An RNA of 207 nucleotides, treated with 2A3 and DMS and read out base by base. The data come from the RNA Mapping Database (RMDB), library RNAMAK. Conditions: 150 mM KOAc, 10 mM MgCl2 and 150 mM bicine (pH 8.5), 24 C. For DMS, 1,564 sequencing reads were counted. Values cover nucleotides 27 to 156.
[RMDB]
RNA sequence: GGGAACGACUCGAGUAGAGUCGAAAAUUAUCGCCCUUCGGGGCGAUAAGCGUAGAUAUGGAUAGCAUCGAUCGGAUUGGACGAAGAACUCGGAAACGAGGGAGUCCCAUCCGGGAGCUAUCCUAAGUCACUAUAACCAACCUUUCGAGGUUGGUAAAGCUUUAUAGGCUUUCGAGCCUAUAAAGCUAAAAGAAACAACAACAACAAC
Reactivity to 2A3 in 0.01 (KOAc 150mM, MgCl2 10mM, bicine 150mM(pH8.5), 24C), signal-to-noise 2, nucleotides 027 to 156: u020u000a000u020c000g020c010c010c040u000u140c300g030g010g000g020c000g010a000u000a010a010g000c010g050u070a090g020a050u020a060u130g010g010a000u020a000g010c070a270u090c050g240a130u100c010g060g000a000u010u010g010g000a040c010g080a280a060g030a050a000c000u000c020g000g030a060a020a050c000g000a010g000g000g020a010g000u000c020c010c010a000u000c000c000g000g010g000a000g000c000u000a000u000c000c000u000a000a000g000u000c010a000c100u100a080u220a230a000c110c000a000a000c000c010u080u110u210c300g130a000g000g050u000u020g000g000u010a030a060
Reactivity to DMS in 0.01 (KOAc 150mM, MgCl2 10mM, bicine 150mM(pH8.5), 24C), signal-to-noise 1, nucleotides 027 to 156: u000u000a030u020c000g050c030c000c000u000u000c300g020g050g000g010c010g000a010u000a000a090g010c090g060u000a080g040a150u000a200u000g010g000a050u000a010g010c020a200u000c210g000a080u000c050g010g000a110u010u000g010g000a050c000g000a070a170g010a160a090c000u020c000g000g000a130a090a300c030g000a070g030g040g010a220g050u000c000c000c030a070u010c000c010g030g040g000a030g020c010u000a000u000c010c000u000a000a120g000u010c070a070c160u000a090u010a240a020c040c020a000a020c000c030u010u010u020c250g000a030g010g120u020u000g010g010u010a000a080